[RMDB]
RNA sequence: GGGAACGACUCGAGUAGAGUCGAAAAUAAUAUACGUAGCCAUUAAGACUAGCCUUAAGCAUGGGGGUGAAGUACCAGAGCAGAAGAUUGUUACCUCCAUCUGUGAUGAGGAUGCACUUCCCCUAAAAUAGCUAUCCAAAUUCGUUUGGAUAGCUAUAAAAGAAACAACAACAACAAC
Reactivity to DMS in 0.01 (KOAc 150mM, MgCl2 10mM, bicine 150mM(pH8.5), 24C), signal-to-noise 6, nucleotides 027 to 126: u010a080a090u010a110u000a070c110g000u010a040g010c040c020a080u010u000a070a110g010a070c050u000a100g010c030c030u000u010a100a160g010c070a050u000g000g000g000g010g010u000g010a060a060g020u010a070c060c050a070g000a110g020c110a060g000a060a080g010a110u010u000g000u000u010a070c040c020u000c020c020a040u000c080u000g010u000g010a110u010g010a060g010g010a110u010g010c090a070c090u000u000c020c000c000c160u000a040a040a070
Reactivity to 2A3 in 0.01 (KOAc 150mM, MgCl2 10mM, bicine 150mM(pH8.5), 24C), signal-to-noise 3, nucleotides 027 to 126: u050a000a090u120a020u020a120c050g030u030a010g050c020c020a060u120u110a130a010g060a050c030u060a030g060c000c000u050u080a080a010g030c060a060u080g020g020g020g000g010u040g030a060a030g020u020a070c000c030a050g010a010g100c050a020g030a150a020g030a120u120u230g090u150u080a080c000c000u020c050c020a040u030c070u040g100u050g040a080u110g020a020g060g000a020u100g000c000a020c040u040u060c000c000c000c000u040a050a080a000